Record summary
Chemical mapping of a 207-nucleotide RNA with DMS and 2A3. The reactions ran in a buffer of 150 mM KOAc, 10 mM MgCl2 and 150 mM bicine (pH 8.5), at 24 C. The data come from the RNA Mapping Database (RMDB), library OK3TST.
[RMDB]
RNA sequence: GGGAACGACUCGAGUAGAGUCGAAAAAGCAGUUUUACUCCAAGCGUACCGCUGGAUAGCGGACAGUCGUGAUGAAUAUACUAAAGAGAGGUUACGUUCUUUAAACGAUGCAUUUAAGUUGUAUAGAUGCCAUACAAUCAUGAAUUGCUCUAAAACCUCUAUCUCCAAAAUUCGUUUUGGAGAUAGAAAAAGAAACAACAACAACAAC
Reactivity to DMS in 0.01 (KOAc 150mM, MgCl2 10mM, bicine 150mM(pH8.5), 24C), signal-to-noise 3, nucleotides 027 to 156: a070g040c030a100g000u000u000u000u000a070c040u020c040c050a070a180g030c040g010u000a090c020c000g020c010u010g060g030a130u000a010g040c000g000g010a100c030a050g010u000c000g030u000g030a080u000g000a030a110u000a130u000a090c070u010a040a080a150g010a110g000a050g020g000u000u000a060c060g010u000u000c060u000u000u000a030a100a090c050g010a120u000g000c020a030u000u010u020a100a110g000u000u000g000u010a150u010a080g000a060u000g000c060c060a170u000a050c040a040a050u000c030a110u000g010a100a040u000u000g000c010u000c070u000a080a080a050a080c070c070
Reactivity to 2A3 in 0.01 (KOAc 150mM, MgCl2 10mM, bicine 150mM(pH8.5), 24C), signal-to-noise 6, nucleotides 027 to 156: a000g040c050a030g020u060u060u070u150a100c060u040c030c040a080a040g020c010g030u050a100c000c020g000c020u060g080g120a120u200a060g030c030g000g040a070c010a030g070u050c020g030u010g030a040u060g020a110a020u150a030u040a130c070u130a060a140a020g130a020g000a010g040g010u040u030a030c060g010u040u040c000u030u110u090a050a070a030c080g010a040u140g010c010a010u000u010u060a090a040g010u010u010g030u030a010u010a020g090a040u120g080c040c000a000u030a060c010a020a070u090c030a010u050g040a040a030u130u070g000c000u000c020u060a090a140a060a080c000c010

Reactivities are given for positions 27 through 156. The 2A3 profile rests on 3,958 reads. For 2A3 the reverse transcriptase was SuperScript II with manganese.